Source: RMDB library TTRDEL, as collected in RNAgym. This 177-nucleotide RNA was probed chemically with DMS and 2A3. DMS adducts were read by reverse transcription with MarathonRT.
RNA sequence: GGGAACGACUCGAGUAGAGUCGAAAAGAUAUGGACCCAUCCGAGGGAAACGAUUGGGUGUCGGAAACGACAUAGAUCUCGCCCGUUUGACGAUGGGUCCUAAGUCAAACUCCUCUUCGGAGGAGAAGUAUUCGCAUACGUUCGCGUAUGCGAAUACAAAAGAAACAACAACAACAAC
Reactivity to DMS in 0.01 (KOAc 150mM, MgCl2 10mM, bicine 150mM(pH8.5), 24C), signal-to-noise 2, nucleotides 027 to 126: g000a020u000a300u010g000g000a000c000c000c000a000u000c010c000g010a110g020g020g020a090a050a120c210g020a020u000u000g010g010g000u000g000u000c000g000g000a090a070a260c010g030a030c010a030u000a300g010a020u010c000u000c300g020c000c000c010g000u000u000u020g010a200c300g000a000u000g000g000g000u000c040c000u000a050a080g000u010c000a130a130a190c000u000c000c000u000c000u000u010c110g010g000a010g000g000a000g010a010a050
Reactivity to 2A3 in 0.01 (KOAc 150mM, MgCl2 10mM, bicine 150mM(pH8.5), 24C), signal-to-noise 1, nucleotides 027 to 126: g010a040u070a030u090g000g000a000c030c010c000a020u000c010c010g020a120g000g040g010a080a170a180c180g020a050u040u180g300g170g040u050g000u000c000g010g000a060a050a050c010g010a000c000a000u020a040g010a010u050c030u030c060g170c050c000c000g070u160u260u260g040a020c000g000a010u000g020g000g000u010c000c000u000a030a000g000u040c010a000a030a070c000u030c030c000u040c020u020u030c250g120g000a030g030g030a010g020a010a010